[RMDB]
RNA sequence: GGGAACGACUCGAGUAGAGUCGAAAAUGAAGCAAAUCCAUAACUGCCAAUGAUGAGCAAUUCGCUAUUGCCGCCUAAAAACGGUUAGCCGGGGCUGCUAGAGCCUUGUUACCAAAGAUAGCCGGCGUUACGGCAUGAUGGUUCGCCAUCAUGCCAAUCCUUUACUAUGAUUCGUCAUAGUAAAGGAAAAAGAAACAACAACAACAAC
Reactivity to 2A3 in 0.01 (KOAc 150mM, MgCl2 10mM, bicine 150mM(pH8.5), 24C), signal-to-noise 4, nucleotides 027 to 156: u090g010a060a030g020c040a070a000a050u050c040c030a060u080a140a060c010u080g020c020c020a100a140u150g040a060u060g020a040g040c020a010a100u170u140c080g010c040u090a030u060u150g010c000c000g020c000c010u070a050a040a020a010a020c030g000g040u060u040a010g000c020c020g000g000g010g000c000u040g030c060u090a060g020a020g210c000c000u020u030g030u050u060a050c040c010a050a060a000g080a040u040a020g030c010c020g030g000c010g040u070u120a050c090g000g010c000a000u000g000a000u000g000g070u030u040c130g030c050c000a000u000c000a000u000g000c000c000a000a000
Reactivity to DMS in 0.01 (KOAc 150mM, MgCl2 10mM, bicine 150mM(pH8.5), 24C), signal-to-noise 2, nucleotides 027 to 156: u000g000a150a120g000c050a090a080a100u000c050c030a150u010a030a110c050u010g010c020c020a100a170u010g010a110u010g000a110g040c020a040a070u000u010c040g010c040u010a060u000u000g020c010c010g020c010c030u010a050a040a070a140a040c020g040g000u000u000a050g030c040c000g050g020g020g010c020u000g010c060u000a130g010a090g010c000c000u000u000g000u000u000a200c070c040a050a080a060g020a110u000a070g010c020c080g010g010c070g020u000u010a130c120g010g000c020a010u000g000a020u010g010g030u010u010c300g020c030c000a010u010c000a010u000g000c000c000a010a040

Source: RMDB library M2RFPK, as collected in RNAgym.
Structure probing data (2A3 and DMS) for a 207-nucleotide construct.
The DMS profile rests on 4,640 reads.
Reactivities are rounded to 0.1 and cut off at 0 and 3.